[RMDB]
The record gives the reactivity of an RNA of 177 nucleotides to DMS. The RNA was probed in 150 mM KOAc, 10 mM MgCl2 and 150 mM bicine (pH 8.5) at 24 C. Values cover nucleotides 27 to 126.
RNA sequence: GGGAACGACUCGAGUAGAGUCGAAAAGAUAUGGAAUAAAAGUCUAGUGCGGUGGAGACAUGCGAUACAUUCGGAAACGAAUGUUCGCAACAGCUCCAAGCCGCACUAGACUUUUAUUCCUAAGUCACCUCACUAAAAGGUUCGCCUUUUAGUGAGGAAAAGAAACAACAACAACAAC
Reactivity to DMS in 0.01 (KOAc 150mM, MgCl2 10mM, bicine 150mM(pH8.5), 24C), signal-to-noise 1, nucleotides 027 to 126: g000a040u020a300u000g000g020a050a060u000a000a000a040a000g020u000c000u000a010g010u000g020c020g000g020u000g020g020a080g000a030c090a250u020g040c030g020a010u020a000c000a000u000u000c020g000g020a110a110a220c000g000a000a000u000g010u010u010c000g000c010a000a010c300a190g010c020u000c000c000a080a280g000c010c010g020c000a020c010u010a000g000a010c000u000u010u000u000a000u000u010c000c000u000a000a050g000u000c070a270